[RMDB]
RNA sequence: GGGAACGACUCGAGUAGAGUCGAAAAUGAACUAUGCCUGAGUAGGGUGAAGCCAGGGGAAACUCUGGUGGAAGCUCGUAGCGAUUCUGACGUGCAAAUCGAUCGUCAAACUUGGGUAUAGGGGCGAUUCGACCACAAUAUUCGUAUUGUGGUCGAAAAAAGAAACAACAACAACAAC
Reactivity to 2A3 in 0.01 (KOAc 150mM, MgCl2 10mM, bicine 150mM(pH8.5), 24C), signal-to-noise 6, nucleotides 027 to 126: u100g020a030a010c000u000a000u000g000c000c000u010g010a000g000u030a040g020g020g030u270g100a000a000g000c000c010a000g000g000g010g010a030a040a020c010u010c000u000g000g000u020g000g010a010a020g010c000u010c000g010u070a010g020c010g020a010u100u040c080u300g030a040c060g110u220g050c110a030a050a120u090c020g010a000u010c000g050u040c040a110a050a050c010u010u000g010g000g000u010a000u000a010g010g000g030g040c050g060a050
Reactivity to DMS in 0.01 (KOAc 150mM, MgCl2 10mM, bicine 150mM(pH8.5), 24C), signal-to-noise 5, nucleotides 027 to 126: u060g030a220a130c010u020a010u010g010c010c010u010g000a000g020u010a160g010g000g010u000g000a300a160g020c000c000a000g020g000g000g000a120a080a160c000u000c000u010g000g000u000g010g000a150a190g000c000u000c000g040u020a140g000c040g000a010u010u020c080u050g030a020c050g000u030g000c300a130a110a140u000c030g000a030u000c000g010u000c070a080a070a060c000u010u000g000g000g000u000a010u000a010g000g000g000g040c120g010a110
The record gives the reactivity of an RNA of 177 nucleotides to 2A3 and DMS. Values cover nucleotides 27 to 126. 2A3 is a SHAPE reagent: it acylates the 2'-hydroxyl of flexible nucleotides of all four kinds. The reactions ran in a buffer of 150 mM KOAc, 10 mM MgCl2 and 150 mM bicine (pH 8.5), at 24 C.